[RMDB]
RNA sequence: GGGAACGACUCGAGUAGAGUCGAAAAAACAGGAGUCUAUAAAAGCGUGGGGACAGUUCAGGAGGGGGCUCGCAUCUCUCCUUCACGCGCCCGCCGCCUUACCUGAGGCCGCCAUCCACGCCGGUUGCGGUCAGCUGAUAUUCGUAUCAGCUGACCGAAAAGAAACAACAACAACAAC
Reactivity to DMS in 0.01 (KOAc 150mM, MgCl2 10mM, bicine 150mM(pH8.5), 24C), signal-to-noise 1, nucleotides 027 to 126: a060a000c090a010g040g010a210g010u000c010u150a090u050a050a090a070a080g000c040g070u010g000g000g060g000a130c090a040g000u030u000c060a040g000g070a090g010g000g000g000g010c040u010c100g000c060a200u000c020u010c040u000c040c000u030u000c060a070c070g070c150g000c070c030c020g000c040c000g100c000c030u000u000a090c070c010u010g000a040g020g000c030c160g000c060c040a040u080c000c000a030c110g000c000c070g010g010u000u040g050
Reactivity to 2A3 in 0.01 (KOAc 150mM, MgCl2 10mM, bicine 150mM(pH8.5), 24C), signal-to-noise 1, nucleotides 027 to 126: a000a040c110a010g010g060a060g180u000c010u100a130u060a150a090a090a000g080c010g030u000g070g000g020g000a120c060a150g010u070u030c000a010g000g000a030g010g000g000g000g060c040u030c000g000c010a110u000c100u000c030u000c090c000u030u030c090a080c080g030c030g020c080c050c020g000c000c000g080c040c020u030u100a090c030c030u020g000a070g000g030c060c000g020c000c000a030u000c030c000a010c020g000c020c030g050g000u050u090g040